[RMDB]
RNA sequence: GGGAACGACUCGAGUAGAGUCGAAAAGCCGUGGUAGACGAGAGCCGGCAUGCGAAAGGAUGGUGGAUGGGAAAGCAUGCUGGCACUCUAGGAUGGGAAAGCAUGCUAUUGUACCAGGAUCCAUCCGAAACGUACGUUCAUACAGCAUGCGAAAGGACCCUAUAAGGGGCUUCGGCCCCUUAUAGGGAAAAGAAACAACAACAACAAC
Reactivity to 2A3 in 0.01 (KOAc 150mM, MgCl2 10mM, bicine 150mM(pH8.5), 24C), signal-to-noise 1, nucleotides 027 to 156: g000c000c000g030u070g040g020u090a050g010a050c040g000a000g000a000g000c020c000g040g000c020a000u000g000c000g090a170a010a030g120g010a090u170g030g100u170g030g050a160u140g020g030g000a020a090a000g000c000a000u000g020c010u000g010g020c010a000c000u000c000u000a030g000g040a000u300g000g020g000a050a040a070g000c000a000u300g010c000u050a010u150u210g030u040a040c010c080a000g040g030a020u040c030c020a010u000c000c010g000a070a030a010c030g010u140a020c040g080u050u060c020a000u150a110c010a020g000c000a000u030g020c010g040a050a070a000g160g000a060
Conditions: 150 mM KOAc, 10 mM MgCl2 and 150 mM bicine (pH 8.5), 24 C. Chemical mapping of a 207-nucleotide RNA with 2A3. Values cover nucleotides 27 to 156.